[RMDB]
RNA sequence: GGGAACGACUCGAGUAGAGUCGAAAAGGUGAGCUGGACGGGAAGUAGGUCCAGCGACUGCAUCCGAAGCUUUGAUAAGAGCAACUCCAUCUACGUUGCUCAAGUAGGUGGUAGCAGCAAACACCGAGACUGAGUAGGGCUUCGGCCCUACUCAGUCAAAAGAAACAACAACAACAAC
Reactivity to 2A3 in 0.01 (KOAc 150mM, MgCl2 10mM, bicine 150mM(pH8.5), 24C), signal-to-noise 1, nucleotides 027 to 126: g020g000u000g020a000g000c000u000g000g000a010c000g110g050g070a270a060g040u300a040g130g050u040c000c000a000g000c010g000a000c000u000g000c010a070u000c000c010g060a100a000g000c060u060u040u120g040a120u290a150a030g010a010g000c000a000a000c020u040c130c070a060u000c040u060a060c030g000u000u020g000c000u000c020a000a000g000u010a000g010g010u080g040g000u030a090g000c000a000g030c080a130a030a000c000a000c030c010g020a020
Reactivity to DMS in 0.01 (KOAc 150mM, MgCl2 10mM, bicine 150mM(pH8.5), 24C), signal-to-noise 1, nucleotides 027 to 126: g080g010u000g010a200g000c000u010g000g000a000c090g150g020g000a230a020g000u010a120g000g000u000c000c000a000g120c000g000a120c000u000g000c000a090u000c000c030g000a280a300g000c000u000u000u010g080a030u070a030a160g010a000g000c000a010a000c080u030c140c010a100u000c060u000a180c200g030u000u000g000c030u000c050a010a030g000u000a030g000g010u040g000g000u000a200g010c090a010g000c000a110a030a300c090a000c000c000g000a120